[RMDB]
An RNA of 177 nucleotides, treated with 2A3 and DMS and read out base by base. The RNA was probed in 150 mM KOAc, 10 mM MgCl2 and 150 mM bicine (pH 8.5) at 24 C. For 2A3 the reverse transcriptase was SuperScript II with manganese. Source: RMDB library OK2TRN, as collected in RNAgym.
RNA sequence: GGGAACGACUCGAGUAGAGUCGAAAAGCUAUACGUAUAGCAUUACGCGUAAUUACGGCGCAUCGAUAUGCUACGUACGUAUACGAUUAAUGCGCUAUAUAAUGCCGUAGCCGUAUAGCGCGCCGCGACCUUCCUCGCUGUUCGCAGCGAGGAAGGUAAAAGAAACAACAACAACAAC
Reactivity to 2A3 in 0.01 (KOAc 150mM, MgCl2 10mM, bicine 150mM(pH8.5), 24C), signal-to-noise 2, nucleotides 027 to 126: g020c000u000a020u000a020c010g030u080a040u120a160g040c020a000u080u120a030c060g000c060g020u090a190a140u110u140a060c080g040g040c000g000c000a050u090c010g100a100u000a000u130g000c020u030a060c190g120u010a030c050g050u010a020u000a030c010g000a000u070u220a130a080u050g000c000g000c020u000a000u030a010u010a250a080u110g000c070c030g010u030a030g050c080c030g020u000a010u000a000g030c020g030c010g030c000c030g080c030g070
Reactivity to DMS in 0.01 (KOAc 150mM, MgCl2 10mM, bicine 150mM(pH8.5), 24C), signal-to-noise 1, nucleotides 027 to 126: g000c120u000a000u000a000c000g010u000a080u000a000g000c020a020u000u000a090c150g000c070g050u000a050a070u040u000a050c170g010g010c020g030c060a010u000c140g000a130u000a030u000g000c030u010a110c200g020u000a000c170g000u000a000u010a000c070g010a130u000u000a080a020u000g000c000g010c000u000a020u000a040u000a150a070u010g010c000c080g000u000a010g030c040c040g000u010a000u000a020g010c020g000c070g020c040c010g000c180g000